[RMDB]
Description:
The data come from the RNA Mapping Database (RMDB), library OK2TRN. Chemical mapping of a 177-nucleotide RNA with 2A3 and DMS. For DMS the reverse transcriptase was MarathonRT. High DMS reactivity at an A or C suggests that its Watson-Crick edge is free. The reactions ran in a buffer of 150 mM KOAc, 10 mM MgCl2 and 150 mM bicine (pH 8.5), at 24 C.
RNA sequence: GGGAACGACUCGAGUAGAGUCGAAAACGGCUGGCUGAUGUUCCGGCGGCGCAUCACGGGGGUAUUCGUGUCCAUCAUUACGCAGGCGCUGGUGCUCGCCUUCGUGACCUGGCUCAGCGGCGCCCAGCUAUCUUUACCCGUUCGCGGGUAAAGAUAGAAAAGAAACAACAACAACAAC
Reactivity to 2A3 in 0.01 (KOAc 150mM, MgCl2 10mM, bicine 150mM(pH8.5), 24C), signal-to-noise 3, nucleotides 027 to 126: c020g070g010c010u060g160g010c030u060g030a080u080g050u160u060c020c000g030g000c030g040g020c040g010c030a050u060c020a010c030g010g010g000g010g020u060a080u050u170c070g020u040g040u030c020c020a100u100c010a030u080u190a070c100g010c060a040g060g000c030g000c070u050g060g050u040g020c040u080c040g030c010c000u020u040c000g030u030g030a020c010c030u030g000g030c030u010c040a010g020c000g020g000c000g000c000c000c000a020g010
Reactivity to DMS in 0.01 (KOAc 150mM, MgCl2 10mM, bicine 150mM(pH8.5), 24C), signal-to-noise 4, nucleotides 027 to 126: c140g000g020c010u010g010g010c030u010g000a070u010g000u010u010c040c010g010g030c130g010g010c100g030c090a100u010c050a050c060g000g000g000g000g030u010a090u000u010c120g030u000g020u000c070c030a050u000c090a090u000u010a080c110g010c130a110g010g000c050g020c070u000g030g010u000g010c080u000c080g000c010c010u000u000c040g000u000g010a050c070c070u000g000g010c030u000c030a050g010c030g000g010c060g010c010c010c030a120g010